This 207-nucleotide RNA was probed chemically with 2A3 and DMS. As a SHAPE reagent, 2A3 marks flexible, mostly unpaired nucleotides at the ribose 2'-OH. It was measured as part of the RMDB library OK3TST. For 2A3, 1,490 sequencing reads were counted. The reactions ran in a buffer of 150 mM KOAc, 10 mM MgCl2 and 150 mM bicine (pH 8.5), at 24 C.
[RMDB]
RNA sequence: GGGAACGACUCGAGUAGAGUCGAAAAGUUCGCAAUGGCUCCGGCGAUACAAUCAAAAUGGAGCUCCAGGACAUCCUCAAGGGUGACUACAUUAACCCUCACGUUUCGAUUUGGCAUUACCGUCUCGAUUCAUUGGAGGAAGUCAAUGAUCCUGCCAGGAAGGAGAAAUGUUCGCAUUUCUCCUUCCAAAAGAAACAACAACAACAAC
Reactivity to 2A3 in 0.01 (KOAc 150mM, MgCl2 10mM, bicine 150mM(pH8.5), 24C), signal-to-noise 3, nucleotides 027 to 156: g060u060u020c000g020c000a040a060u010g020g000c000u000c010c010g030g000c000g030a030u050a210c080a080a140u210c060a040a020a020a110u090g000g000a000g000c000u000c000c020a010g000g020a010c000a020u030c000c000u020c040a030a060g010g010g000u050g050a070c080u150a040c160a120u130u120a040a050c000c000c030u030c010a080c120g040u010u030u000c030g030a040u060u060u130g030g000c090a080u090u290a130c050c040g010u010c000u000c020g010a010u020u030c020a040u110u170g110g010a010g020g030a020a010g080u040c000a010a000u030g020a080u030c020c000u000g000c050c020a040
Reactivity to DMS in 0.01 (KOAc 150mM, MgCl2 10mM, bicine 150mM(pH8.5), 24C), signal-to-noise 1, nucleotides 027 to 156: g020u010u000c070g070c000a040a100u000g020g000c010u000c020c010g000g020c000g080a060u020a160c160a090a160u000c170a050a020a080a130u000g000g040a080g010c000u020c150c050a210g020g020a130c110a080u000c030c030u000c080a110a180g020g080g030u000g000a240c120u000a150c100a110u000u000a300a100c070c000c000u000c010a080c100g000u000u000u000c010g030a080u000u000u000g000g010c060a150u000u020a100c030c010g000u000c010u010c000g000a010u000u000c040a160u000u000g000g020a040g020g010a070a110g020u000c030a100a040u040g000a120u000c050c020u000g000c120c060a130